[RMDB]
Chemical mapping of a 207-nucleotide RNA with 2A3 and DMS. For 2A3, 2,927 sequencing reads were counted. The reactions ran in a buffer of 150 mM KOAc, 10 mM MgCl2 and 150 mM bicine (pH 8.5), at 24 C. DMS adducts were read by reverse transcription with MarathonRT.

RNA sequence: GGGAACGACUCGAGUAGAGUCGAAAAACAUAUUACGAUAUGAUUCAGAUGGUGUCUAACUGGUUCGUACCAAGGGACAUAAUGGUUUCUUGUUUCCAACCAAAGAACAAGUGGCGAGCCUGAAUAAAAAACUGACUGCCGUUCGCGGCAGUCAGAACUAAACAAACGUGUUCGCACGUUUGUUUAGAAAAGAAACAACAACAACAAC
Reactivity to 2A3 in 0.01 (KOAc 150mM, MgCl2 10mM, bicine 150mM(pH8.5), 24C), signal-to-noise 4, nucleotides 027 to 156: a000c040a010u110a030u090u120a040c040g050a020u030a020u160g080a060u050u160c050a040g080a190u120g050g060u050g040u070c040u040a070a090c020u060g020g010u080u090c060g050u090a030c000c020a020a030g000g020g020a000c010a020u230a140a100u130g090g000u010u000u040c020u010u010g030u030u020u000c010c030a060a070c010c010a060a100a020g020a030a020c010a040a050g020u010g040g010c030g020a020g040c020c000u020g060a050a030u120a080a090a020a030a020a040c010u000g000a000c000u000g000c010c010g030u040u050c220g010c000g080g000c010a000g000u000c000a000g000a000a000
Reactivity to DMS in 0.01 (KOAc 150mM, MgCl2 10mM, bicine 150mM(pH8.5), 24C), signal-to-noise 2, nucleotides 027 to 156: a140c020a100u000a060u000u000a100c120g010a160u000a050u000g020a230u000u000c010a110g000a120u000g030g010u000g070u000c030u010a170a180c030u000g010g020u000u000c050g060u000a070c060c020a060a150g010g030g000a040c020a070u000a120a120u000g020g020u000u020u000c020u010u020g000u000u000u000c040c020a010a050c050c040a030a110a140g020a040a050c050a020a190g000u030g010g010c050g030a190g000c000c010u000g030a120a070u030a000a050a110a030a090a170c000u000g010a030c000u010g020c000c000g010u000u000c300g040c030g010g000c010a020g000u000c010a000g010a010a090